[RMDB]
RNA sequence: GGGAACGACUCGAGUAGAGUCGAAAAGAUAUGGACCAUUUGUCAGUCCAAACGGCGGGACGAGCUUUCGGAAACGAAAGAACUACUCGUCCCGCCGGUAGGACUUGGAUUUAAUGGUCCUAAGUCAGAUAAUCCCUGAGUUCGCUCAGGGAUUAUCAAAAGAAACAACAACAACAAC
Reactivity to DMS in 0.01 (KOAc 150mM, MgCl2 10mM, bicine 150mM(pH8.5), 24C), signal-to-noise 1, nucleotides 027 to 126: g070a040u000a300u000g020g020a000c000c000a040u000u000u000g010u000c000a020g000u000c000c000a010a140a300c040g000g020c000g000g000g000a000c000g000a010g020c010u000u000u010c000g000g000a180a170a230c000g000a000a000a000g000a070a010c060u010a300c000u000c000g020u000c000c000c000g020c000c000g000g010u030a270g000g010a000c010u000u000g000g000a010u000u010u000a020a000u010g040g000u000c010c000u020a040a110g020u000c040a250

Overview
Chemical mapping of a 177-nucleotide RNA with DMS. For DMS the reverse transcriptase was MarathonRT. It was measured as part of the RMDB library TTRINS. The RNA was probed in 150 mM KOAc, 10 mM MgCl2 and 150 mM bicine (pH 8.5) at 24 C. The DMS profile rests on 907 reads.